[RMDB]
RNA sequence: GGGAACGACUCGAGUAGAGUCGAAAAUAGCUGACGUUCGCGUCAGCUAAAAGCACCAAAACCUCCUGGCGGUGCGGCGCCGGCGCCGCCGGGAAGGCCGCCAACUCGAUGGGUUCGCCCAUCGAAAGCUACUUAUAAGGUUCGCCUUAUAAGUAGCAAAAGAAACAACAACAACAAC
Reactivity to 2A3 in 0.01 (KOAc 150mM, MgCl2 10mM, bicine 150mM(pH8.5), 24C), signal-to-noise 1, nucleotides 027 to 126: u000a000g000c000u000g000a010c010g050u060u030c260g050c020g100u000c010a000g010c000u000a000a000a010a000g000c020a050c090c010a010a090a120a180c000c010u000c010c010u010g000g000c020g000g000u030g000c000g090g140c250g100c080c140g130g000c020g000c000c000g000c000c000g000g000g000a000a000g000g020c000c010g070c030c020a050a060c060u010c000g000a000u010g000g020g050u040u030c160g070c020c000c010a010u000c000g000a010a010a000